[RMDB]
RNA sequence: GGGAACGACUCGAGUAGAGUCGAAAAUCCAGCGAGAUCAUGCGGUUGCUCAUUGCCCGCGAAGCGGUAGACGCGCACCUGACCGCCGCUGGGGAUCUGGCCAAACCCAACACCGAUCUUCGGAAGACUAAAUAUCACGUUUCGACGUGAUAUUUAGAAAAGAAACAACAACAACAAC
Reactivity to DMS in 0.01 (KOAc 150mM, MgCl2 10mM, bicine 150mM(pH8.5), 24C), signal-to-noise 7, nucleotides 027 to 126: u020c020c020a110g020c050g000a070g020a040u020c050a120u020g000c040g000g010u030u020g000c060u000c210a130u030u020g000c010c000c010g020c050g010a070a050g020c020g000g020u000a070g010a100c090g010c060g000c030a060c050c040u000g010a050c030c050g000c010c030g010c000u010g010g000g000g010a050u010c040u010g010g010c070c060a080a080a100c020c020c010a100a100c140a080c060c030g000a040u020c050u020u020c020g000g000a120a100g010a210
Reactivity to 2A3 in 0.01 (KOAc 150mM, MgCl2 10mM, bicine 150mM(pH8.5), 24C), signal-to-noise 9, nucleotides 027 to 126: u020c010c000a010g030c020g030a080g020a080u110c060a080u190g020c030g040g030u100u150g020c020u040c080a130u070u230g070c010c010c010g010c020g010a080a010g010c020g010g010u050a040g030a080c060g020c010g000c080a040c010c030u050g090a050c000c020g010c010c010g000c040u070g000g010g010g030a050u030c050u060g040g000c010c010a050a040a070c010c010c010a030a030c020a030c040c050g030a050u040c000u060u060c080g040g040a080a020g040a050